[RMDB]
RNA sequence: GGGAACGACUCGAGUAGAGUCGAAAAGAUAUGGAACCAAGGUAGGGAGCUGUCAUGGUCGGAAACGACCAUGCAGCGAGGAUCUACUUGGUUCCUAAGUCAAAGGGGGUCUGUUCGCAGACCCCCACACAUACACUUGCUUCGGCAAGUGUAUGUGAAAAGAAACAACAACAACAAC
Reactivity to 2A3 in 0.01 (KOAc 150mM, MgCl2 10mM, bicine 150mM(pH8.5), 24C), signal-to-noise 1, nucleotides 027 to 126: g000a000u140a000u110g010g020a000a010c010c010a020a030g220g050u090a010g000g040g090a250g040c040u080g270u300c050a010u020g020g000u000c020g000g050a040a020a050c010g000a010c000c020a000u000g000c000a000g000c000g010a020g000g010a060u010c010u010a010c010u020u010g000g010u000u010c000c000u000a020a010g020u000c070a120a150a160g000g000g010g000g000u030c010u010g050u050u060c210g010c140a010g000a010c020c010c010c010c000a000
Reactivity to DMS in 0.01 (KOAc 150mM, MgCl2 10mM, bicine 150mM(pH8.5), 24C), signal-to-noise 2, nucleotides 027 to 126: g000a060u000a300u000g000g000a020a000c000c000a000a020g020g010u010a000g010g000g010a100g030c010u000g000u030c010a000u000g020g000u000c000g020g000a090a080a160c020g010a040c000c000a000u000g000c010a000g030c000g010a040g000g000a050u000c000u000a020c000u000u000g020g000u000u000c000c000u000a010a050g000u000c050a090a090a190g010g000g020g010g030u000c000u000g010u000u010c200g040c020a040g010a000c000c000c010c000c000a000

Chemical mapping of a 177-nucleotide RNA with 2A3 and DMS. For DMS the reverse transcriptase was MarathonRT. The DMS profile rests on 2,625 reads.